[RMDB]
RNA sequence: GGGAACGACUCGAGUAGAGUCGAAAAAACGAGGUAGGCAUCGCACGCUUUGUGACGGCCGUCCUUGAAGCCGAAAGUGGUGGAUGACCAGCGACGCGCCUAUCCCCCUGCUUCGGCGAUGGCGCGAUACCUAGCUCCAGUUCGCUGGAGCUAGGUAAAAAGAAACAACAACAACAAC
Reactivity to 2A3 in 0.01 (KOAc 150mM, MgCl2 10mM, bicine 150mM(pH8.5), 24C), signal-to-noise 1, nucleotides 027 to 126: a000a000c100g010a020g030g030u130a050g000g070c000a010u050c060g010c010a040c010g000c070u010u050u070g150u080g170a040c050g000g040c010c020g040u030c010c000u030u170g090a080a000g000c000c000g050a040a040a000g010u030g000g000u000g000g000a010u000g130a160c010c010a000g060c000g020a010c020g010c000g000c000c000u090a190u080c050c000c010c000c030u030g000c060u050u040c030g110g020c000g000a060u000g000g000c000g000c000g000a000
Reactivity to DMS in 0.01 (KOAc 150mM, MgCl2 10mM, bicine 150mM(pH8.5), 24C), signal-to-noise 2, nucleotides 027 to 126: a070a050c080g010a050g010g020u000a110g000g010c010a010u000c000g030c010a070c060g000c090u000u010u000g030u000g030a290c030g000g000c010c030g020u010c140c140u000u010g010a110a090g010c030c010g000a020a020a030g000u000g000g000u010g000g000a060u000g000a070c070c050a100g000c140g000a160c060g020c050g020c000c010u000a140u000c000c020c010c020c030u000g000c030u010u000c030g010g000c080g000a070u000g000g010c010g010c010g010a190